Chemical mapping of a 207-nucleotide RNA with DMS and 2A3.
It was measured as part of the RMDB library OK3TST.
Reactivities are given for positions 27 through 156.
The 2A3 profile rests on 2,230 reads.
Reactivities are rounded to 0.1 and cut off at 0 and 3.
The RNA was probed in 150 mM KOAc, 10 mM MgCl2 and 150 mM bicine (pH 8.5) at 24 C.
RNA sequence: GGGAACGACUCGAGUAGAGUCGAAAAUUCGUCUUUGUCUUCGAACAGUUGCGCCAUAUCAGAUUGUGACAACUCGCCUUUCAUCGCUUGCUUGUUGGCGGAUAGUUUCGCCAUGAUCUUCUUGCGCUCCUUCUUGCGCAUAUCGUUAAGGCGCUCGAGUUCGUAGUUGAUUCGUCAACUACGAACUAAAAGAAACAACAACAACAAC
Reactivity to DMS in 0.01 (KOAc 150mM, MgCl2 10mM, bicine 150mM(pH8.5), 24C), signal-to-noise 2, nucleotides 027 to 156: u010u010c040g030u000c050u000u000u010g000u000c020u020u000c050g030a040a160c040a160g010u000u000g030c030g070c010c010a100u010a100u000c060a110g000a090u020u000g060u000g000a060c010a100a050c030u000c050g030c030c030u000u000u000c040a060u000c070g040c120u010u010g030c080u000u000g040u000u000g010g010c040g010g010a070u010a080g010u000u000u000c000g030c010c010a020u010g010a040u000c010u000u000c090u000u020g020c000g000c020u010c100c120u000u000c080u010u010g010c030g010c050a060u000a020u000c050g000u000u010a060a160g000g010c000g050c030u010c050g010
Reactivity to 2A3 in 0.01 (KOAc 150mM, MgCl2 10mM, bicine 150mM(pH8.5), 24C), signal-to-noise 4, nucleotides 027 to 156: u110u040c020g020u020c080u070u060u060g050u020c030u050u050c120g070a110a070c040a120g060u070u040g010c010g000c010c010a030u040a060u220c050a040g050a090u060u060g070u030g030a030c000a040a040c020u010c020g000c000c010u030u150u120c030a070u060c070g040c150u060u190g030c020u080u080g030u020u040g030g000c000g000g040a070u050a160g100u030u070u140c030g000c000c000a010u020g010a030u010c050u160u000c020u030u060g000c010g000c010u070c070c030u120u260c100u120u120g000c000g000c010a020u030a010u080c020g040u040u080a090a040g010g020c010g000c030u030c000g010